[RMDB]
RNA sequence: GGGAACGACUCGAGUAGAGUCGAAAACGCAAAGCUGCAGCGCGGCGCUCUGGAGGCCUUGCCCCGCGCACUGCUCUUUACAUGGCCCGACGUGAGGGCACUACGCGGGCAGUGCUGCGGCCUCGUGAAACUGCCCCUAAGUUCGCUUAGGGGCAAAUAUUGUUCGUAGUUUCGACUACGAACAAUAAAAAGAAACAACAACAACAAC
Reactivity to DMS in 0.01 (KOAc 150mM, MgCl2 10mM, bicine 150mM(pH8.5), 24C), signal-to-noise 1, nucleotides 027 to 156: c020g020c060a060a070a090g010c000u010g000c020a050g020c000g030c010g000g010c020g020c030u000c060u000g050g020a170g000g050c020c050u000u000g030c070c040c010c000g090c050g040c050a040c110u010g010c000u000c020u000u020u020a080c030a050u010g040g000c040c060c040g030a250c130g020u020g000a050g000g040g000c020a000c030u020a040c000g000c170g010g000g000c000a110g000u000g010c010u000g030c040g020g000c000c000u000c060g000u010g000a120a090a150c110u000g040c000c010c000c020u000a000a020g000u000u000c300g010c010u000u000a000g010g000g000g030c000a000a000a020
Reactivity to 2A3 in 0.01 (KOAc 150mM, MgCl2 10mM, bicine 150mM(pH8.5), 24C), signal-to-noise 2, nucleotides 027 to 156: c060g010c040a090a060a030g000c000u000g000c000a020g030c010g010c020g050g050c070g040c030u070c100u150g190g100a070g000g000c040c000u070u100g010c120c000c000c000g030c010g030c010a000c020u010g000c010u000c020u030u210u190a070c030a110u150g150g030c000c070c040g120a110c080g020u040g000a100g010g010g010c000a020c020u040a030c010g010c020g010g000g020c000a010g010u020g020c000u020g010c000g010g010c000c000u000c000g010u010g030a140a120a030c080u050g000c000c000c010c000u000a000a020g000u050u110c110g000c140u000u000a000g000g000g010g000c000a020a020a000
This 207-nucleotide RNA was probed chemically with DMS and 2A3. The RNA was probed in 150 mM KOAc, 10 mM MgCl2 and 150 mM bicine (pH 8.5) at 24 C. Reactivities are rounded to 0.1 and cut off at 0 and 3.